[RMDB]
RNA sequence: GGGAACGACUCGAGUAGAGUCGAAAAGCACAGGCAGGGGUACCAGCCACCCUAAACUCAGCGUCCAUAGCGAGUGUACAGGAGGCGACUUUUUUAAAACGUCCUUUUGGCUUUGGUCUGUGCAUCAUGGCUGGUGCUUAUGAAGAACAUGGCCAACGAUCACCAUGUUGUUCGCAACAUGGUGAUCAAAAGAAACAACAACAACAAC
Reactivity to 2A3 in 0.01 (KOAc 150mM, MgCl2 10mM, bicine 150mM(pH8.5), 24C), signal-to-noise 1, nucleotides 027 to 156: g000c030a010c040a030g010g000c010a010g000g110g040g000u010a020c010c010a000g060c000c000a050c010c020c000u000a070a100a060c000u030c120a040g060c030g090u080c080c000a080u070a070g060c040g020a010g040u070g020u110a080c100a030g010g020a060g000g000c060g020a050c000u050u040u100u030u200u270a130a190a010a020c000g160u170c000c000u040u140u090u040g000g000c000u060u000u080g030g020u050c020u070g000u030g040c000a010u170c030a040u100g060g000c060u000g000g040u010g030c010u100u080a150u260g160a080a070g050a060a000c060a050u090g030g000c050c000a040a010c050
An RNA of 207 nucleotides, treated with 2A3 and read out base by base. The data come from the RNA Mapping Database (RMDB), library OK3TST. The reactions ran in a buffer of 150 mM KOAc, 10 mM MgCl2 and 150 mM bicine (pH 8.5), at 24 C.